The data come from the RNA Mapping Database (RMDB), library OK3TST.
Structure probing data (2A3 and DMS) for a 207-nucleotide construct.
2A3 adducts were read by reverse transcription with SuperScript II with manganese.
The RNA was probed in 150 mM KOAc, 10 mM MgCl2 and 150 mM bicine (pH 8.5) at 24 C.
2A3 is a SHAPE reagent: it acylates the 2'-hydroxyl of flexible nucleotides of all four kinds.
The DMS profile rests on 2,834 reads.
For DMS the reverse transcriptase was MarathonRT.
RNA sequence: GGGAACGACUCGAGUAGAGUCGAAAAGCGAAAGGGACGGAAGUACCUCCAGUAAGCGAAAGCUGAAGUAAGGGAAAUACGGCAAGACUAACUUGUUAGUCUUACAGUGUGGAUAACCUGGUAGUUAUCCCCGACAAGAGACCUGACUCGAUGUGAACCUAUUGAGAGUCUUCGGACUCUCAAUAGGAAAAGAAACAACAACAACAAC
Reactivity to 2A3 in 0.01 (KOAc 150mM, MgCl2 10mM, bicine 150mM(pH8.5), 24C), signal-to-noise 2, nucleotides 027 to 156: g040c030g040a070a000a010g020g040g050a020c060g000g010a040a010g010u000a010c000c000u000c030c000a000g000u020a000a000g000c000g050a050a030a000g000c000u010g020a040a010g260u180a010a020g000g030g070a030a040a010u120a040c070g020g010c090a030a000g000a010c000u000a010a030c030u090u150g050u140u040a020g010u000c000u010u040a060c050a050g000u010g000u080g200g000a010u000a020a000c000c030u090g190g070u140a120g000u010u010a010u020c000c000c000c000g010a020c040a070a010g020a010g000a060c000c040u040g090a070c010u010c020g080a060u070g080u050g120a070a060
Reactivity to DMS in 0.01 (KOAc 150mM, MgCl2 10mM, bicine 150mM(pH8.5), 24C), signal-to-noise 2, nucleotides 027 to 156: g030c040g000a090a070a090g000g000g000a040c020g010g000a100a140g020u000a060c000c000u030c020c030a180g000u010a090a050g010c010g020a180a130a180g010c010u000g000a110a290g000u000a020a030g000g000g010a080a110a110u010a050c020g030g010c010a010a010g000a020c010u000a000a010c070u000u030g030u000u000a030g020u000c010u000u000a020c000a080g020u000g020u010g020g000a060u000a010a000c010c060u000g030g030u000a110g040u000u000a030u000c020c030c000c020g010a210c030a030a100g000a280g010a090c000c010u010g000a170c030u010c040g020a160u010g010u000g000a160a260